[RMDB]
RNA sequence: GGGAACGACUCGAGUAGAGUCGAAAAUUAAUGAAGCAAAUCUCCAAACGCCAACGAUGAGCGUUUCGCAUUCGCCGCUUAAGGCUUUUGCCGAGGCUGCUUGAGCCUUGUUACCAAAGAAAAGCCGAAAACCCAAAUGUCUUCGGACAUUUGGGAAGCAGUUAAUAUGGUUCGCCAUAUUAACUGCAAAAGAAACAACAACAACAAC
Reactivity to DMS in 0.01 (KOAc 150mM, MgCl2 10mM, bicine 150mM(pH8.5), 24C), signal-to-noise 1, nucleotides 027 to 156: u000u010a090a090u020g000a070a020g030c010a020a070a090u010c000u000c060c030a050a040a050c000g000c000c010a070a160c090g000a140u010g010a140g020c020g020u000u010u010c080g070c080a140u010u010c040g000c000c030g010c090u000u000a050a160g030g020c010u020u000u000u010g020c000c040g030a110g000g050c010u010g010c110u010u040g010a060g020c040c020u000u030g000u000u000a160c060c060a060a050a180g000a060a040a080a080g000c020c030g000a050a020a070a170c000c000c000a000a020a000u000g000u000c000u000u000c300g030g010a010c010a000u000u000u000g000g020g040a010a030
Reactivity to 2A3 in 0.01 (KOAc 150mM, MgCl2 10mM, bicine 150mM(pH8.5), 24C), signal-to-noise 3, nucleotides 027 to 156: u140u110a030a070u140g050a030a020g020c030a080a040a120u030c070u020c050c040a030a030a010c020g000c020c010a090a080c130g190a250u120g060a030g030c010g010u020u050u060c050g010c020a060u000u060c050g020c060c010g040c130u180u130a120a050g000g000c000u020u030u010u020g040c010c010g010a010g000g010c020u040g020c020u060u110g030a000g000c010c000u010u000g030u070u120a070c030c030a030a030a020g050a010a080a040a000g030c020c020g080a040a050a050a090c000c010c010a000a000a000u000g000u000c000u020u050c160g050g010a000c000a000u000u010u000g000g000g010a000a000